Background: The data come from the RNA Mapping Database (RMDB), library RFMREP. Structure probing data (DMS and 2A3) for a 177-nucleotide construct. For 2A3, 1,708 sequencing reads were counted. For DMS the reverse transcriptase was MarathonRT. High DMS reactivity at an A or C suggests that its Watson-Crick edge is free. For DMS, 529 sequencing reads were counted. The RNA was probed in 150 mM KOAc, 10 mM MgCl2 and 150 mM bicine (pH 8.5) at 24 C.

[RMDB]
RNA sequence: GGGAACGACUCGAGUAGAGUCGAAAACCGCCCGUCGCUCCUACCGACUGGGCGCGGCGGCGAGCGUCCCGGACCGGAAGGGCCGCGAGCCCCCGCGCCUGGAGGAAGGAGAAGUCGUAACAAGGUAGUACAUAAGAACGUUCGCGUUCUUAUGUACAAAAGAAACAACAACAACAAC
Reactivity to DMS in 0.01 (KOAc 150mM, MgCl2 10mM, bicine 150mM(pH8.5), 24C), signal-to-noise 1, nucleotides 027 to 126: c040c040g020c050c040c020g010u000c030g010c050u000c000c000u020a200c040c020g010a100c010u000g030g010g000c000g050c040g000g000c300g000g000c010g000a210g000c010g020u000c010c000c000g000g020a300c130c220g000g000a150a240g000g000g010c110c000g000c000g010a300g000c000c000c060c000c000g000c010g000c010c020u000g010g000a300g000g000a150a080g010g000a000g000a030a060g000u000c010g030u030a050a130c190a140a050g000g000u010a130
Reactivity to 2A3 in 0.01 (KOAc 150mM, MgCl2 10mM, bicine 150mM(pH8.5), 24C), signal-to-noise 2, nucleotides 027 to 126: c000c000g010c020c000c000g040u010c040g000c020u030c010c000u040a060c000c000g300a300c090u000g000g000g010c000g000c010g000g010c000g000g000c000g000a010g000c010g010u040c010c000c000g030g090a200c140c100g110g150a060a020g060g010g020c000c000g020c010g000a010g000c010c000c020c010c000g000c000g010c000c000u010g010g000a000g020g030a020a000g020g040a010g000a020a040g060u040c030g070u110a100a010c020a180a000g100g060u060a020